RNA sequence: GGGAACGACUCGAGUAGAGUCGAAAAUGUAAAUGUGUUAUACAUUUACCAACAUGCGAAUACAUGUGAAGUCUUUACCUCUUAUCGCGUAUGGAGAUGCAACACACUUUUGAGCCUAAAUAAGAAAGUAAUGAUCACGAUUCGUCGUGAUCAUUACAAAAGAAACAACAACAACAAC
Reactivity to DMS in 0.01 (KOAc 150mM, MgCl2 10mM, bicine 150mM(pH8.5), 24C), signal-to-noise 3, nucleotides 027 to 126: u040g020u010a020a070a030u010g000u020g040u010u040a150u040a180c010a000u010u000u010a020c030c220a090a090c120a060u000g010c060g000a030a150u010a080c130a040u000g000u000g000a060a110g010u030c060u010u010u000a110c020c010u000c000u000u000a090u000c050g000c040g010u000a120u000g010g000a060g000a030u010g020c080a050a070c070a080c070a030c040u000u000u000u010g000a050g000c000c030u000a030a030a100u080a030a040g010a180a080a100
Reactivity to 2A3 in 0.01 (KOAc 150mM, MgCl2 10mM, bicine 150mM(pH8.5), 24C), signal-to-noise 9, nucleotides 027 to 126: u230g020u060a000a040a040u030g020u010g140u190u120a200u090a100c000a000u000u020u020a190c010c000a020a040c020a080u080g010c040g210a190a020u110a110c050a030u080g020u050g130a060a060g070u040c060u040u120u110a070c020c010u030c010u040u060a040u100c030g010c010g050u020a080u160g020g010a050g000a020u040g010c030a050a020c010a000c000a030c040u040u050u040u090g070a050g030c010c010u090a110a120a080u210a110a080g150a140a050a020